[RMDB]
RNA sequence: GGGAACGACUCGAGUAGAGUCGAAAAUUGAGUCAUUGGCAUGUAAGAUAAAUAUACCUGCAUGUUAGUCUUAGGUUCUGAUAGAAAUGACAUGCAAUUAUGCUGCCAUUUUUUACUAUCAGGACUCGUUUAUUAACCUGUUCGCAGGUUAAUAAACAAAAGAAACAACAACAACAAC
Reactivity to DMS in 0.01 (KOAc 150mM, MgCl2 10mM, bicine 150mM(pH8.5), 24C), signal-to-noise 3, nucleotides 027 to 126: u010u010g000a050g010u010c100a110u010u000g010g000c000a000u010g010u000a040a060g010a080u020a050a090a160u010a110u010a060c070c020u000g010c020a000u000g010u000u010a080g010u000c040u000u010a110g010g000u000u010c000u000g000a000u000a000g000a050a030a020u000g010a000c000a000u020g030c000a060a190u010u000a070u000g010c000u000g010c000c000a000u000u000u010u000u000u000a240c020u000a000u000c000a010g000g000a000c000u000c210
Reactivity to 2A3 in 0.01 (KOAc 150mM, MgCl2 10mM, bicine 150mM(pH8.5), 24C), signal-to-noise 3, nucleotides 027 to 126: u090u100g020a010g050u090c050a060u050u070g000g030c020a000u000g030u040a180a040g020a090u140a120a300a010u230a050u050a120c010c020u000g000c000a000u010g020u030u030a040g020u000c010u020u050a050g040g000u000u010c000u010g010a000u000a010g040a010a010a000u000g000a010c000a010u200g000c010a020a050u270u100a100u270g000c000u000g010c000c000a000u000u000u010u000u020u030a060c000u010a010u000c000a010g000g020a000c010u000c020